[RMDB]
RNA sequence: GGGAACGACUCGAGUAGAGUCGAAAAGAGAGGCCGGUACGCGCACUCUCGAGUACGAUCACGGCCGCGCGAUCGAUCCUCAGUACUACGCGUCGAUCGGUACCGGCGCGCGUGGCCGCGCGUCAGCCGGAGGCGGAAGGUUCGCCUUCCGCCUCCGAAAAGAAACAACAACAACAAC
Reactivity to DMS in 0.01 (KOAc 150mM, MgCl2 10mM, bicine 150mM(pH8.5), 24C), signal-to-noise 1, nucleotides 027 to 126: g000a090g040a050g000g010c130c020g010g000u000a070c120g020c110g030c030a200c020u000c050u000c060g010a070g030u000a090c030g020a090u020c060a090c050g000g030c030c140g060c000g000c000g010a070u000c010g010a030u000c030c000u000c260a080g030u000a160c060u000a070c120g030c080g020u000c100g010a040u000c060g000g010u000a010c110c020g000g000c040g030c000g000c030g000u000g020g000c100c020g010c000g000c040g000u000c080a100g000c090
Reactivity to 2A3 in 0.01 (KOAc 150mM, MgCl2 10mM, bicine 150mM(pH8.5), 24C), signal-to-noise 1, nucleotides 027 to 126: g020a000g010a040g010g080c050c140g090g050u170a060c070g100c010g000c130a140c250u040c000u040c040g010a020g020u040a040c090g020a070u090c060a010c060g000g000c030c030g020c020g000c000g040a040u080c000g020a130u060c000c020u000c030a010g030u050a120c040u050a030c030g000c030g130u120c040g050a160u080c000g060g060u090a150c000c090g020g000c010g010c000g050c000g020u000g060g030c070c010g030c000g000c000g000u000c010a010g050c020
Structure probing data (DMS and 2A3) for a 177-nucleotide construct. The RNA was probed in 150 mM KOAc, 10 mM MgCl2 and 150 mM bicine (pH 8.5) at 24 C. 2A3 adducts were read by reverse transcription with SuperScript II with manganese.